[RMDB]
This 177-nucleotide RNA was probed chemically with 2A3 and DMS. For DMS the reverse transcriptase was MarathonRT. The reactions ran in a buffer of 150 mM KOAc, 10 mM MgCl2 and 150 mM bicine (pH 8.5), at 24 C. For DMS, 6,540 sequencing reads were counted.
RNA sequence: GGGAACGACUCGAGUAGAGUCGAAAAGCGCAGCAGUGCCAGCUCUACGCAAGGAUCGCCCUGAUGCUGUCGCGUUCGCUGCAGCACUCGGCCAGCUGCACUGCCAUGGCAUCAGCCCAUCCUGGAACAUGGUAAUCCAGUUCGCUGGAUUACCAUGAAAAGAAACAACAACAACAAC
Reactivity to 2A3 in 0.01 (KOAc 150mM, MgCl2 10mM, bicine 150mM(pH8.5), 24C), signal-to-noise 8, nucleotides 027 to 126: g040c070g000c020a020g020c010a000g050u040g070c140c050a010g010c000u040c060u120a120c110g050c150a090a070g100g030a140u150c070g040c000c000c020u080g060a210u020g010c000u000g030u080c050g000c010g080u160u240c260g000c030u030g000c010a010g010c000a010c020u020c000g030g000c010c030a010g000c000u010g000c000a000c000u010g000c000c030a080u100g050g010c010a030u070c040a080g030c000c000c020a040u090c010c030u070g050g010a090a040
Reactivity to DMS in 0.01 (KOAc 150mM, MgCl2 10mM, bicine 150mM(pH8.5), 24C), signal-to-noise 5, nucleotides 027 to 126: g020c010g000c070a160g010c030a010g000u000g000c160c070a030g000c000u010c280u010a110c080g000c210a090a100g010g000a100u020c280g000c040c020c040u010g000a050u010g000c000u010g010u010c300g000c050g010u030u060c140g000c030u000g000c020a020g020c000a020c020u010c300g000g000c020c250a050g000c000u000g000c010a000c020u010g010c010c050a040u010g000g010c010a080u040c140a180g020c000c000c000a090u050c080c020u010g010g000a180a140